RNA sequence: GGGAACGACUCGAGUAGAGUCGAAAACGCUCCCAAAGCUGAGGAGCAGAAAAAAGACUCGUCUGGUCCAGCUAAGGUAGAGCCAGCGAUUACUCCAUCGGCACCACAACCAGUCACCACUGCUGAAACGAUUAAAUUAGUUCGCUAAUUUAAUCGUAAAAGAAACAACAACAACAAC
Reactivity to DMS in 0.01 (KOAc 150mM, MgCl2 10mM, bicine 150mM(pH8.5), 24C), signal-to-noise 7, nucleotides 027 to 126: c190g020c070u000c000c010c010a090a150a110g010c050u000g010a120g000g000a030g010c030a080g000a000a040a060a110a070a090g000a180c130u000c050g000u010c010u000g010g000u000c020c030a160g010c060u010a090a100g020g000u010a090g000a110g010c020c030a040g010c030g010a070u000u000a070c050u000c020c030a050u000c060g010g010c030a120c060c040a040c080a050a060c040c030a070g010u000c050a060c040c020a070c060u000g010c060u010g010a090a080
Reactivity to 2A3 in 0.01 (KOAc 150mM, MgCl2 10mM, bicine 150mM(pH8.5), 24C), signal-to-noise 6, nucleotides 027 to 126: c020g020c020u020c000c010c000a080a110a030g050c060u050g030a050g020g020a010g010c040a060g160a030a100a010a010a010a010g110a040c060u050c060g110u050c080u030g040g040u040c020c020a020g030c050u060a110a080g090g050u050a040g020a020g080c000c010a010g010c010g040a040u040u080a070c010u010c020c010a100u040c020g010g010c020a010c020c020a030c010a020a040c020c010a000g020u020c000a010c050c010a040c030u050g010c020u050g050a120a160
Source information:
An RNA of 177 nucleotides, treated with DMS and 2A3 and read out base by base. The 2A3 profile rests on 14,572 reads. DMS adducts were read by reverse transcription with MarathonRT. For DMS, 8,505 sequencing reads were counted. For 2A3 the reverse transcriptase was SuperScript II with manganese. The RNA was probed in 150 mM KOAc, 10 mM MgCl2 and 150 mM bicine (pH 8.5) at 24 C.